[RMDB]
RNA sequence: GGGAACGACUCGAGUAGAGUCGAAAAGAUUAGGCAGAUAACAACUAUAACGCGUCUUGCCACUGUAUUGUAAAGUAAACAACAAGAUAUAAGUUUAAUACACCUACGCGACAAGAUGAAUCAGCAAGUAUACUGGGACAUUCGUGUCCCAGUAUACAAAAGAAACAACAACAACAAC
Reactivity to DMS in 0.01 (KOAc 150mM, MgCl2 10mM, bicine 150mM(pH8.5), 24C), signal-to-noise 2, nucleotides 027 to 126: g020a130u000u000a050g020g020c040a050g020a160u000a060a060c070a050a060c100u000a100u000a050a030c120g000c050g000u000c000u000u010g010c020c010a060c080u000g010u000a050u000u000g000u000a070a050a110g010u000a010a020a010c080a050a120c120a030a110g010a120u000a080u000a080a060g000u000u000u000a020a030u000a030c060a060c170c120u000a020c010g000c030g000a020c040a050a030g010a040u000g000a060a060u030c100a060g000c160a020a100
Reactivity to 2A3 in 0.01 (KOAc 150mM, MgCl2 10mM, bicine 150mM(pH8.5), 24C), signal-to-noise 2, nucleotides 027 to 126: g020a020u130u160a060g070g000c050a010g110a140u110a170a000c050a070a000c080u040a050u090a300a070c070g010c010g050u000c010u010u030g000c000c000a020c070u090g010u050a030u080u100g020u070a000a120a070g070u050a000a080a030c040a030a020c010a060a100g060a060u070a010u010a270a050g000u000u000u050a040a020u030a040c040a030c010c010u030a000c020g000c000g010a030c020a030a020g000a020u020g000a040a020u070c010a010g080c020a000a160
This 177-nucleotide RNA was probed chemically with DMS and 2A3.
The data come from the RNA Mapping Database (RMDB), library M2PK90.
As a SHAPE reagent, 2A3 marks flexible, mostly unpaired nucleotides at the ribose 2'-OH.
Values cover nucleotides 27 to 126.
The RNA was probed in 150 mM KOAc, 10 mM MgCl2 and 150 mM bicine (pH 8.5) at 24 C.
For 2A3, 1,362 sequencing reads were counted.
2A3 adducts were read by reverse transcription with SuperScript II with manganese.